[RMDB]
RNA sequence: GGGAACGACUCGAGUAGAGUCGAAAAGCCUCUUCAUAGGUCCGGAGUCGACCUCCAUCUGAUCUGUUCGGGCCCUCUUCGCCGGGGGAGCUCCCUCCCCGUCCUUCCCUUUUCUUAUGAUUCCCAGACAGUGCAUACUUCGGUAUGCACAAAAGAAACAACAACAACAAC
Reactivity to DMS in 0.01 (KOAc 150mM, MgCl2 10mM, bicine 150mM(pH8.5), 24C), signal-to-noise 8, nucleotides 027 to 129: g000c000c000u030c160u070u020c080a110u040a090g000g000u040c000c080g030g010a030g000u030c050g020a110c100c000u000c020c020a080u000c090u050g030a040u030c050u040g000u060u000c080g010g000g020c000c020c010u000c040u010u020c100g010c130c080g040g010g010g010g010a000g000c040u020c040c000c010u000c020c000c000c020g000u030c040c030u010u000c030c020c020u000u000u010u000c050u000u070a080u050g010a180u010u010c010c010c020a170g000a120c120a080
Reactivity to 2A3 in 0.01 (KOAc 150mM, MgCl2 10mM, bicine 150mM(pH8.5), 24C), signal-to-noise 8, nucleotides 027 to 129: g020c010c010u050c060u150u050c060a110u080a150g000g020u020c020c020g040g020a020g020u040c020g060a100c000c030u020c020c000a090u060c050u090g060a080u010c020u050g100u080u080c040g000g020g000c010c020c010u050c030u060u060c030g030c010c030g010g000g000g000g000a020g010c020u050c030c000c000u010c000c000c000c000g020u020c000c000u020u030c000c000c000u020u050u030u020c030u030u110a140u110g050a070u010u010c000c010c000a020g050a090c060a030